The record gives the reactivity of an RNA of 207 nucleotides to 2A3 and DMS. It was measured as part of the RMDB library OK3TST. The RNA was probed in 150 mM KOAc, 10 mM MgCl2 and 150 mM bicine (pH 8.5) at 24 C.
[RMDB]
RNA sequence: GGGAACGACUCGAGUAGAGUCGAAAAUCUUACUGUCUUGAAAUGGAAUGUAUUUGCACUUAACAUUCUUCCUUGUCAUCAUUGCCAGUCUUGACAAAUGCUUUUACCUUUUCACAGAUUAUCACGGUGCUCACAGGCACUUUUUCUCAGCCUGGUACAUACCCCUAUCGUUCGCGAUAGGGGUAUGAAAAGAAACAACAACAACAAC
Reactivity to 2A3 in 0.01 (KOAc 150mM, MgCl2 10mM, bicine 150mM(pH8.5), 24C), signal-to-noise 4, nucleotides 027 to 156: u020c000u020u050a080c030u080g050u030c040u060u090g030a050a070a060u090g010g020a000a030u030g030u050a080u030u080u180g060c030a050c070u060u130a140a010c050a060u050u020c000u050u090c010c020u040u070g070u080c010a040u020c010a060u060u150g020c020c010a000g020u010c020u060u060g020a040c020a020a060a060u060g030c020u090u080u070u150a100c010c010u050u070u050u110c030a040c030a050g060a120u040u110a050u230c020a010c100g030g000u060g030c030u020c020a100c000a020g020g000c000a020c000u060u030u000u050u020c060u010c010a000g000c010c010u010g010g010u030a010
Reactivity to DMS in 0.01 (KOAc 150mM, MgCl2 10mM, bicine 150mM(pH8.5), 24C), signal-to-noise 2, nucleotides 027 to 156: u000c040u000u010a090c050u000g030u000c010u000u000g000a070a100a070u010g030g020a070a040u000g020u010a040u000u000u000g020c050a090c050u000u010a090a090c040a130u010u000c040u000u000c050c020u010u000g000u000c040a020u000c030a060u020u010g010c050c070a130g020u000c070u010u000g020a070c020a040a060a070u000g010c040u000u000u010u000a060c050c030u000u010u000u010c020a080c080a070g010a130u000u010a080u000c080a060c060g040g000u010g030c030u010c080a090c110a090g010g040c010a080c070u000u020u010u010u000c080u010c090a150g010c030c010u000g000g040u010a150